[RMDB]
RNA sequence: GGGAACGACUCGAGUAGAGUCGAAAACAUAGCGUUUCACAAUGUGCGCCAUUAACAUUGUUUAUGCAAGCACGUUUCGCAAUGUACGGCGCAGAAACAUUGCCAACACAAAUACGCUUCACGGUGUAAAACAUCGGUGCGUUCGCGCACCGAUGAACUCACACCUGAAGUUCGCUUCAGGUGUGAGAAAAGAAACAACAACAACAAC
Reactivity to DMS in 0.01 (KOAc 150mM, MgCl2 10mM, bicine 150mM(pH8.5), 24C), signal-to-noise 1, nucleotides 027 to 156: c030a150u000a010g050c060g040u000u000u000c070a000c010a070a070u000g040u000g030c020g030c070c040a180u000u000a110a090c020a070u000u000g000u000u000u000a040u000g000c010a120a180g050c060a130c070g050u010u000u000c230g000c050a050a000u000g030u000a120c090g030g030c030g120c040a040g020a160a110a120c010a060u000u000g000c030c050a110a090c020a100c040a040a070a120u000a020c070g010c040u000u020c090a100c040g000g040u000g010u000a050a000a050a260c000a000u000c010g060g070u010g030c000g030u000u000c300g040c020g000c000a000c010c000g020a000u000g000a020a100
Reactivity to 2A3 in 0.01 (KOAc 150mM, MgCl2 10mM, bicine 150mM(pH8.5), 24C), signal-to-noise 4, nucleotides 027 to 156: c040a030u150a030g040c040g010u010u060u090c130a040c010a030a020u060g030u010g010c010g010c000c030a090u130u170a050a010c000a000u020u020g040u050u150u120a100u140g060c080a060a100g050c050a050c190g030u040u120u100c030g000c000a000a020u000g000u020a030c060g020g000c000g010c020a010g020a000a040a000c010a020u010u040g050c070c060a100a020c060a030c020a070a160a020u100a030c020g020c000u120u160c100a070c090g000g000u040g020u080a060a090a040a010c000a000u000c010g000g000u010g000c000g020u010u040c210g020c000g000c080a000c000c000g000a000u000g000a000a000
This 207-nucleotide RNA was probed chemically with DMS and 2A3. Reactivities are given for positions 27 through 156. Conditions: 150 mM KOAc, 10 mM MgCl2 and 150 mM bicine (pH 8.5), 24 C. It was measured as part of the RMDB library M2RFPK. The DMS profile rests on 1,632 reads.